[RMDB]
RNA sequence: GGGAACGACUCGAGUAGAGUCGAAAAGAUAUGGAGUGGUGCCGAAAGCUGAGAAAUGCUUGGACCUCCUUCGGAAACGAAGGAGCUAGCAUUUCUUCAGCUUAUAGACAGCACCACUCCUAAGUCAGUGUGAACUAUUCUUCGGAAUAGUUCACACAAAAGAAACAACAACAACAAC
Reactivity to DMS in 0.01 (KOAc 150mM, MgCl2 10mM, bicine 150mM(pH8.5), 24C), signal-to-noise 1, nucleotides 027 to 126: g000a070u020a300u000g020g000a000g040u000g010g030u000g010c000c030g000a170a040a080g030c000u000g010a060g000a010a000a030u000g000c000u080u000g020g030a160c300c010u000c000c010u000u010c000g000g000a080a080a110c000g030a000a000g000g000a010g010c000u000a000g040c000a000u000u000u000c000u030u000c000a000g000c010u000u000a010u000a140g010a300c300a160g020c010a000c000c000a000c000u000c000c000u000a000a000g000u000c040a050
This 177-nucleotide RNA was probed chemically with DMS. In probing experiments dimethyl sulfate is read out at A N1 and C N3, which are open when not base-paired. The DMS profile rests on 823 reads.